[RMDB]
RNA sequence: GGGAACGACUCGAGUAGAGUCGAAAACGGAUCUUCGGAUCCGCAAUUAUCCUAAGUCAGCUGGAGACGGUGCGCUCGCAGAUAAUAUCGGAAACGAUAUUGUAGAGCAAAUCGUCGUUGAAAGCUGAUAUGGAAUGUGAGAACCUUCGGGUUCUAAGAUCCUAGAAUGGUUCGCCAUUCUAGGAUCAAAAGAAACAACAACAACAAC
Reactivity to DMS in 0.01 (KOAc 150mM, MgCl2 10mM, bicine 150mM(pH8.5), 24C), signal-to-noise 2, nucleotides 027 to 156: c000g030g000a000u010c010u000u000c300g040g000a000u010c000c000g140c020a010a060u000u000a070u000c000c000u000a080a300g030u000c000a040g010c000u030g000g000a300g000a010c000g010g040u000g010c300g010c010u000c000g000c130a140g000a140u000a030a030u010a000u000c010g040g000a270a140a300c000g010a050u000a000u000u000g000u000a170g010a060g020c000a040a060a010u000c010g010u000c000g030u000u000g010a300a150a040g020c010u000g010a020u000a180u000g020g000a050a060u010g030u000g020a120g020a020a020c000c000u010u000c210g030g010g010u000u000c000u000a090a230
Reactivity to 2A3 in 0.01 (KOAc 150mM, MgCl2 10mM, bicine 150mM(pH8.5), 24C), signal-to-noise 3, nucleotides 027 to 156: c020g020g020a020u020c020u070u120c300g120g010a010u010c010c000g070c030a100a110u250u210a110u100c000c000u030a130a010g030u000c000a000g000c000u000g020g000a020g000a020c000g000g000u030g010c010g000c000u020c010g020c070a000g060a210u140a070a000u000a030u000c020g000g010a130a070a020c000g000a000u010a000u000u010g050u060a060g000a000g000c000a000a040a020u000c000g000u010c000g000u050u000g010a030a000a020g000c000u000g000a010u010a000u030g010g040a050a110u140g070u100g130a050g000a060a020c010c000u060u090c300g120g000g000u000u000c000u000a020a010
This 207-nucleotide RNA was probed chemically with DMS and 2A3. Values cover nucleotides 27 to 156. DMS adducts were read by reverse transcription with MarathonRT.